Background
An RNA of 207 nucleotides, treated with DMS and 2A3 and read out base by base. For 2A3 the reverse transcriptase was SuperScript II with manganese. Source: RMDB library OK3TST, as collected in RNAgym. For 2A3, 1,756 sequencing reads were counted.
RNA sequence: GGGAACGACUCGAGUAGAGUCGAAAAAAUGACAAAUACAUUGUUAACCACUGCCCCGGAUAGAUUAGGCACUAUCUUGAGUACUAAGAUUGAUGAGUAUAUUCGCAGUCAGAACGUAUCUCUUGCCCGUGUAGGUCAAAGGUACUACAAUCAAGACGUGGCAUAUAAGGUUCGCCUUAUAUGCCACAAAAGAAACAACAACAACAAC
Reactivity to DMS in 0.01 (KOAc 150mM, MgCl2 10mM, bicine 150mM(pH8.5), 24C), signal-to-noise 1, nucleotides 027 to 156: a040a130u010g000a150c050a120a100a100u000a110c020a110u020u000g030u000u000a090a090c020c010a270c090u010g070c000c010c010c060g000g050a090u000a040g010a190u000u010a120g000g000c080a200c010u000a060u000c010u000u000g000a000g050u000a090c100u030a080a140g010a090u000u010g000a050u010g040a090g020u000a100u000a080u010u010c070g000c060a120g010u010c030a080g040a060a070c120g010u000a070u000c020u030c090u000u010g040c000c010c030g000u000g030u000a090g020g000u010c060a080a070a050g000g030u000a030c040u030a050c050a060a080u000c110a080a110g020a140c200
Reactivity to 2A3 in 0.01 (KOAc 150mM, MgCl2 10mM, bicine 150mM(pH8.5), 24C), signal-to-noise 3, nucleotides 027 to 156: a000a010u170g010a020c050a030a060a070u250a140c070a180u050u030g040u030u060a060a050c030c020a050c120u060g040c030c010c020c010g030g010a020u040a030g100a030u080u190a080g110g000c040a010c030u030a020u020c000u030u060g050a010g030u080a050c050u080a050a070g020a110u040u100g020a120u100g000a030g090u130a090u050a060u190u060c040g000c000a000g020u020c000a000g040a160a030c050g030u010a050u000c030u010c010u000u010g010c000c000c010g060u160g250u300a010g030g000u020c000a010a010a010g000g000u000a010c010u050a000c040a070a100u120c040a040a000g080a020c080